[RMDB]
RNA sequence: GGGAACGACUCGAGUAGAGUCGAAAAAGUACAGUUAAAGCGCCUGUGCAAAUAAAUAUUUGUAUUUGAAGAUUAAAGGUUAAUAUAUGAGUGGCCUUUAUAGAGUGCAAUAUAUGUAUUUGUAGACGAUGGUGACACUUUUCGAAGUGUCACCAUCAAAAGAAACAACAACAACAAC
Reactivity to 2A3 in 0.01 (KOAc 150mM, MgCl2 10mM, bicine 150mM(pH8.5), 24C), signal-to-noise 1, nucleotides 027 to 126: a000g200u160a060c150a080g020u000u130a130a190a070g040c010g060c020c000u000g000u020g000c000a000a000a000u010a000a030a000u000a000u030u040u000g000u010a050u000u000u000g080a040a000g000a040u000u010a000a000a000g060g060u000u040a270a050u110a090u060a110u170g070a010g100u090g000g000c000c020u000u000u000a000u010a010g010a000g010u000g000c000a010a010u120a000u000a000u140g030u070a000u000u040u010g020u000a000g000a080c040